[RMDB]
RNA sequence: GGGAACGACUCGAGUAGAGUCGAAAAAUUGGUGGUAGAAAUAUCUUUGCUUGAAAGUUUGCUCAAGAAACACCAUGCAUAUUUGACAUCAUAAGGAAAGAAAUGAGCAGAACCAUACAUCCAACUUACAUUGCAAUUACUGCAGAGGAAGAGAGAAUAGUGGUAGUAUCUUCGGAUACUACCACUAAAAAGAAACAACAACAACAAC
Reactivity to DMS in 0.01 (KOAc 150mM, MgCl2 10mM, bicine 150mM(pH8.5), 24C), signal-to-noise 2, nucleotides 027 to 156: a100u000u030g010g020u000g010g020u040a090g000a140a140a130u000a100u000c040u000u000u010g010c050u000u000g000a140a100a130g000u000u000u000g000c040u010c040a050a090g030a180a090a110c040a060c040c010a030u000g000c060a100u000a110u000u000u020g000a090c010a060u000c080a150u000a060a110g000g010a150a040a120g000a050a070a160u010g000a100g000c000a040g000a050a090c010c030a040u000a120c030a070u000c020c010a010a100c090u000u000a040c050a110u030u090g000c030a030a190u000u000a090c130u000g000c050a050g020a130g010g010a060a010g000a080g000a130g010a090a170
Reactivity to 2A3 in 0.01 (KOAc 150mM, MgCl2 10mM, bicine 150mM(pH8.5), 24C), signal-to-noise 4, nucleotides 027 to 156: a010u100u090g020g010u020g000g040u050a060g070a110a080a010u100a050u080c030u020u070u130g050c030u030u060g100a110a110a080g060u160u160u080g020c030u030c050a070a030g050a100a060a030c040a030c020c020a010u050g070c050a010u070a150u130u110u120g040a030c000a020u090c020a030u070a150a060g080g000a060a070a060g040a020a030a020u040g010a000g000c020a010g020a020a010c050c000a020u080a100c020a030u040c030c010a000a040c050u070u050a040c030a130u060u090g040c000a010a080u080u080a130c060u020g040c020a000g010a020g070g040a060a000g030a030g010a000g070a100a030